[RMDB]
RNA sequence: GGGAACGACUCGAGUAGAGUCGAAAAUGAGGCAGGGGAGGGCACUGGCCCGUAGCUGGCCGAGAGCUCUCGGGUUGCGCGACAGGGAUACUUUUCAGCGGCUGGGUCGCUAUCCAAAGUGAGAAAACGAGGAGGGACCAGGAGGCUGUCCGCCUCAGUCUAAGAAUAGUUUCGACUAUUCUUAGACAAAAGAAACAACAACAACAAC
Reactivity to 2A3 in 0.01 (KOAc 150mM, MgCl2 10mM, bicine 150mM(pH8.5), 24C), signal-to-noise 1, nucleotides 027 to 156: u090g010a020g030g010c040a050g060g010g020g000a000g010g040g000c020a010c140u050g000g030c070c030c060g040u070a030g000c210u110g000g000c040c030g020a000g000a000g040c010u050c000u010c040g040g060g010u050u060g030c080g000c020g060a030c030a050g050g030g040a070u100a230c040u160u160u030u090c040a010g010c000g080g000c030u070g000g140g020u030c020g000c130u010a100u040c030c020a080a020a010g050u040g040a180g120a070a070a020a010c050g000a000g020g040a010g040g000g000a020c010c030a030g020g020a000g000g000c010u010g020u000c030c040g020c010c000u020c030a010
The data come from the RNA Mapping Database (RMDB), library OK3TST. Chemical mapping of a 207-nucleotide RNA with 2A3. The RNA was probed in 150 mM KOAc, 10 mM MgCl2 and 150 mM bicine (pH 8.5) at 24 C. Reactivities are given for positions 27 through 156.